RNA sequence: GGGAACGACUCGAGUAGAGUCGAAAAAUCCCGGGGUUGGCGCGUAAGAAUCGUACUUCCGUACUGCUAAGCAUGGAAGAUCAGGCCGUUCCGGGAGGCUUUAUCUGCUUAGGAAUUUCUUUCGCGACCACCUAGUGUAGUUCGCUACACUAGGUGGAAAAGAAACAACAACAACAAC
Reactivity to DMS in 0.01 (KOAc 150mM, MgCl2 10mM, bicine 150mM(pH8.5), 24C), signal-to-noise 1, nucleotides 027 to 126: a160u000c000c000c020g030g000g040g040u000u030g000g010c000g000c020g010u000a020a030g010a030a000u060c200g030u000a000c030u080u050c300c250g010u000a030c020u000g050c030u010a040a070g000c000a150u020g030g010a140a030g010a090u000c170a080g000g000c010c030g000u080u010c010c000g020g030g030a140g000g000c010u000u010u030a000u000c050u000g000c000u010u000a000g000g020a110a050u010u000u000c010u000u000u000c010g000c010g030a280
Reactivity to 2A3 in 0.01 (KOAc 150mM, MgCl2 10mM, bicine 150mM(pH8.5), 24C), signal-to-noise 4, nucleotides 027 to 126: a000u050c020c000c000g000g010g000g000u090u130g050g020c030g000c020g060u020a030a000g000a070a050u090c090g020u000a020c010u230u080c060c060g010u020a020c010u020g130c020u030a010a010g000c030a070u200g090g140a150a010g010a050u020c020a010g010g000c000c000g020u120u040c020c010g000g010g000a010g010g000c000u040u020u010a020u010c010u020g040c000u020u030a030g060g080a230a200u040u010u020c000u000u040u030c020g000c010g030a050
The record gives the reactivity of an RNA of 177 nucleotides to DMS and 2A3. Reactivities are given for positions 27 through 126. The RNA was probed in 150 mM KOAc, 10 mM MgCl2 and 150 mM bicine (pH 8.5) at 24 C. Source: RMDB library OK1LIB, as collected in RNAgym. The DMS profile rests on 2,049 reads.